[RMDB]
RNA sequence: GGGAACGACUCGAGUAGAGUCGAAAAGAUAUGGAUUGUUGAAGGACAACAGCGAUUAGUCGGAAACGACUGGGUCGACAUGUCCCAACAAUCCUAAGUCAAAGCACAUCUCUUCGGAGAUGUGCAAGUCCACUACUCUGUUCGCAGAGUAGUGGACAAAAGAAACAACAACAACAAC
Reactivity to 2A3 in 0.01 (KOAc 150mM, MgCl2 10mM, bicine 150mM(pH8.5), 24C), signal-to-noise 2, nucleotides 027 to 126: g000a000u030a010u040g000g000a020u010u000g070u030u030g110a300a300g040g020a040c090a300a040c150a300g030c010g000a020u000u050a020g000u020c000g000g010a010a000a020c000g020a000c020u030g140g080g000u020c010g030a040c060a210u300g000u000c020c020c020a010a020c000a000a000u000c000c000u000a010a010g000u000c040a130a100a000g010c000a010c000a010u000c000u010c000u050u090c300g120g000a000g000a010u000g010u010g000c000a000a000
Reactivity to DMS in 0.01 (KOAc 150mM, MgCl2 10mM, bicine 150mM(pH8.5), 24C), signal-to-noise 1, nucleotides 027 to 126: g000a020u000a060u030g000g000a000u000u000g000u000u000g010a290a270g030g000a020c000a080a100c130a170g010c000g000a020u010u010a000g010u000c010g020g000a040a040a050c010g000a030c030u000g050g010g000u000c000g000a010c040a300u010g020u000c010c000c000a000a000c020a010a010u000c000c000u000a010a050g000u000c040a100a100a240g020c010a000c000a000u010c000u000c020u000u040c230g030g000a010g060a060u000g000u000g010c000a020a050